[RMDB]
The record gives the reactivity of an RNA of 177 nucleotides to DMS and 2A3. The reactions ran in a buffer of 150 mM KOAc, 10 mM MgCl2 and 150 mM bicine (pH 8.5), at 24 C. The data come from the RNA Mapping Database (RMDB), library OK2TRN. For 2A3, 934 sequencing reads were counted.
RNA sequence: GGGAACGACUCGAGUAGAGUCGAAAAUAAGUGAAGUGAUACUAUCCAGUUACUGCCGGUUUGAAAAUAUGCCUGCAAUCUGAGCCAGUGCUUUAAUGGCAUGUCAGACAGAACUUGAAUGUGUCAGCCCUUCCGAACUAUUCGUAGUUCGGAAGGGAAAAGAAACAACAACAACAAC
Reactivity to DMS in 0.01 (KOAc 150mM, MgCl2 10mM, bicine 150mM(pH8.5), 24C), signal-to-noise 2, nucleotides 027 to 126: u000a060a180g000u010g000a100a090g030u000g010a010u000a010c010u000a210u000c000c020a060g000u000u000a120c020u000g000c040c020g000g000u020u020u010g010a060a070a100a030u030a030u000g000c010c000u000g010c240a050a110u000c140u000g000a020g060c080c090a200g020u000g000c010u010u000u020a040a140u010g010g000c000a020u000g000u000c050a090g020a080c140a030g000a050a010c040u020u010g010a040a220u000g000u000g020u000c020a040g010
Reactivity to 2A3 in 0.01 (KOAc 150mM, MgCl2 10mM, bicine 150mM(pH8.5), 24C), signal-to-noise 1, nucleotides 027 to 126: u210a020a010g060u030g120a120a000g080u050g020a000u000a020c040u040a070u060c020c030a010g000u000u040a220c030u050g020c050c020g000g100u050u140u270g080a040a050a020a020u130a040u170g090c020c000u000g000c020a020a060u010c010u020g030a000g050c030c040a070g090u020g040c010u160u180u150a140a110u130g000g000c010a030u050g040u050c000a000g000a070c050a080g100a060a030c010u030u010g020a050a000u030g000u000g010u000c000a030g000